[RMDB]
RNA sequence: GGGAACGACUCGAGUAGAGUCGAAAAGAUAUGGAUACUCUUGUACUUCGAUGAAAUCGGAAACGAUGGAGAAGACAAGAGGUAUCCUAAGUCAAAAGCUACUACUCUGUUCGCAGAGUAGUAGCAAGUGGAACUUACUGUUCGCAGUAAGUUCCACAAAAGAAACAACAACAACAAC
Reactivity to 2A3 in 0.01 (KOAc 150mM, MgCl2 10mM, bicine 150mM(pH8.5), 24C), signal-to-noise 2, nucleotides 027 to 126: g020a040u070a020u160g000g000a000u020a010c030u000c030u050u010g040u150a300c000u030u030c060g300a300u080g000a080a000a020u000c000g050g000a070a070a010c010g020a020u030g020g030a000g050a010a010g050a000c020a000a030g010a070g060g000u010a000u000c000c000u000a120a010g050u000c010a000a000a160a080g010c030u030a000c000u010a000c000u020c020u010g040u120u220c300g000c120a010g040a000g030u000a000g000u000a000g000c000a000a000
Reactivity to DMS in 0.01 (KOAc 150mM, MgCl2 10mM, bicine 150mM(pH8.5), 24C), signal-to-noise 1, nucleotides 027 to 126: g010a060u000a300u020g010g010a010u000a010c010u000c000u010u000g010u010a120c000u000u000c000g000a150u010g000a050a120a020u010c020g000g000a210a110a190c000g010a000u000g020g000a060g000a000a000g000a040c010a060a010g030a010g010g000u010a000u000c000c000u000a040a060g010u030c000a090a080a130a150g000c000u010a010c000u000a000c000u010c000u000g010u000u000c270g030c030a020g000a010g000u010a040g000u000a000g010c000a030a000